[RMDB]
This 177-nucleotide RNA was probed chemically with DMS and 2A3.
DMS adducts were read by reverse transcription with MarathonRT.
2A3 is a SHAPE reagent: it acylates the 2'-hydroxyl of flexible nucleotides of all four kinds.
The reactions ran in a buffer of 150 mM KOAc, 10 mM MgCl2 and 150 mM bicine (pH 8.5), at 24 C.
RNA sequence: GGGAACGACUCGAGUAGAGUCGAAAACGAAUUUACCUACUGAAAACUAUCGAGCAAAUUCCAAUAACAAGAUUGACAAGGAUGUUGAGAAGACUCCCGCAAUCUUUUCAAGCAUUCGCUGAAACCCAAAUUAGCUAUCAUUCGUGAUAGCUAAUUUAAAAGAAACAACAACAACAAC
Reactivity to DMS in 0.01 (KOAc 150mM, MgCl2 10mM, bicine 150mM(pH8.5), 24C), signal-to-noise 9, nucleotides 027 to 126: c090g020a080a060u030u010u010a060c050c010u010a090c050u000g000a090a080a120a100c100u010a040u010c030g000a060g010c080a050a070a090u000u000c020c040a080a080u020a070a070c150a040a040g000a050u000u010g000a110c100a090a110g000g000a020u020g010u000u000g000a070g010a050a070g000a020c050u010c020c020c080g000c060a070a090u010c000u000u000u010u000c050a020a040g010c020a030u000u010c040g010c090u010g000a070a070a100c020c010c020
Reactivity to 2A3 in 0.01 (KOAc 150mM, MgCl2 10mM, bicine 150mM(pH8.5), 24C), signal-to-noise 9, nucleotides 027 to 126: c030g020a030a030u050u060u100a090c010c010u040a060c030u060g060a020a040a050a070c040u050a060u150c050g010a020g030c030a030a050a100u060u020c020c010a040a030u090a080a050c060a060a030g070a120u060u080g080a070c040a090a040g020g010a040u150g010u030u030g040a060g030a150a040g020a020c020u040c020c020c000g030c040a020a040u000c000u010u030u020u030c020a030a010g050c010a030u030u060c040g010c070u060g040a100a080a080c010c010c000